RNA sequence: GGGAACGACUCGAGUAGAGUCGAAAAUACGGCCAUCCGAAACGUACGUAGGAGUGCUGUAGGACCACGACCGUACGGAAACCAUCCCAACUUCUAUUAUCGUGCAUGCGAAAGGAUGGAGAGCAUGCGAAAGGAUGGCACUCUCUUCAAUUAUCCGUGUUGUCUUACAAUUCGUUGUAAGACAACAAAAAGAAACAACAACAACAAC
Reactivity to 2A3 in 0.01 (KOAc 150mM, MgCl2 10mM, bicine 150mM(pH8.5), 24C), signal-to-noise 9, nucleotides 027 to 156: u200a030c080g040g000c000c000a000u000c000c010g060a090a070a040c030g000u030a010c010g020u050a070g030g050a050g020u020g030c070u110g120u190a120g010g080a040c050c010a020c030g030a050c000c020g030u030a010c010g020g020a070a020a030c010c010a020u020c020c020c010a120a150c060u190u140c070u140a220u270u070a110u160c030g030u060g020c010a010u000g000c020g030a130a060a040g050g000a020u030g020g010a030g020a000g010c000a000u000g000c000g000a050a010a000g000g000a000u010g000g040c000a040c010u040c000u000c000u120u080c060a110a240u190u130a090u220c090c080g040
Reactivity to DMS in 0.01 (KOAc 150mM, MgCl2 10mM, bicine 150mM(pH8.5), 24C), signal-to-noise 3, nucleotides 027 to 156: u010a050c080g040g000c040c020a030u000c010c000g020a090a100a140c030g030u000a050c050g000u000a130g000g020a170g030u010g010c050u010g040u000a130g010g030a120c070c040a120c040g000a180c060c040g020u010a070c020g010g020a120a120a080c040c020a080u000c000c000c050a100a150c120u010u000c070u000a140u000u010a120u000c110g000u000g000c020a020u000g020c000g030a100a080a050g030g000a060u000g020g000a090g000a300g070c010a010u010g020c000g000a080a100a130g000g010a050u000g000g000c030a070c040u000c010u000c010u000u010c120a070a110u000u000a110u000c020c040g010